Record summary
An RNA of 177 nucleotides, treated with DMS and 2A3 and read out base by base. For 2A3 the reverse transcriptase was SuperScript II with manganese. The data come from the RNA Mapping Database (RMDB), libraries RFM100 and RFMREP. High DMS reactivity at an A or C suggests that its Watson-Crick edge is free. DMS adducts were read by reverse transcription with MarathonRT. For 2A3, 1,804 sequencing reads were counted. The RNA was probed in 150 mM KOAc, 10 mM MgCl2 and 150 mM bicine (pH 8.5) at 24 C.
[RMDB]
RNA sequence: GGGAACGACUCGAGUAGAGUCGAAAAAGGGAAACCGACAUGGCCGCAGCAUUGCGAGGGCCGCCGUGUUCAAGCGCGGGGAGUCAAUCGGACACGACCCGAAACCGGAUGAUCUAGACAUGGGCAAUGACACACGGAUAUUCGUAUCCGUGUGUCAAAAAGAAACAACAACAACAAC
Reactivity to DMS in 0.01 (KOAc 150mM, MgCl2 10mM, bicine 150mM(pH8.5), 24C), signal-to-noise 2, nucleotides 027 to 126: a060g000g000g000a090a070a070c030c000g000a060c040a140u000g010g000c060c020g000c040a110g030c070a070u000u010g000c020g000a190g000g000g000c010c010g000c000c040g030u000g020u000u010c160a120a080g000c030g010c040g000g030g000g030a120g000u000c070a070a100u000c060g000g010a090c090a080c070g000a130c020c010c010g000a030a100a120c020c020g000g020a090u000g010a040u020c050u000a060g000a090c050a040u000g000g010g000c140a120a190
Reactivity to 2A3 in 0.01 (KOAc 150mM, MgCl2 10mM, bicine 150mM(pH8.5), 24C), signal-to-noise 3, nucleotides 027 to 126: a000g030g000g040a050a010a030c030c000g050a010c000a060u120g030g000c030c010g000c030a010g000c040a140u100u240g010c010g000a130g010g050g000c000c000g000c000c000g030u010g020u040u150c140a110a050g030c010g000c010g060g000g010g010a030g020u030c020a010a090u060c020g010g030a020c030a010c100g060a030c010c000c000g000a050a020a000c020c000g020g010a060u080g010a050u110c010u040a030g060a090c050a070u070g000g020g010c050a040a130